[RMDB]
RNA sequence: GGGAACGACUCGAGUAGAGUCGAAAACUCCAUGCCUGUUUUUCAUUCCAGUACGCCGUGAUCACUUCUCCAGUUUUCUUGAUCUGUCCUUUCAGCUUCUGAGUCUUUCAGGAGGGUUUUUUUGGGAGUUGGGAUUGUGGUGAUCAAUAGGCUGGGAAUAGCACUAGGAAUUCGUUCCUAGUGCUAUAAAAGAAACAACAACAACAAC
Reactivity to 2A3 in 0.01 (KOAc 150mM, MgCl2 10mM, bicine 150mM(pH8.5), 24C), signal-to-noise 1, nucleotides 027 to 156: c060u070c010c040a110u090g010c000c090u010g010u060u000u000u090u160c010a050u110u060c030c000a060g010u060a090c050g070c000c010g060u040g000a000u010c010a000c010u010u040c030u030c030c030a140g010u140u060u200u000c080u100u010g070a060u050c000u060g270u110c050c060u060u130u110c060a110g090c060u110u000c020u130g190a160g150u160c040u120u300u030c010a000g010g000a010g010g000g000u090u150u010u000u100u270u100g050g000g000a000g000u030u010g050g020g000a060u100u090g040u070g000g010u010g000a000u000c000a030a090u060a090g000g000c000u000g000g000g010a010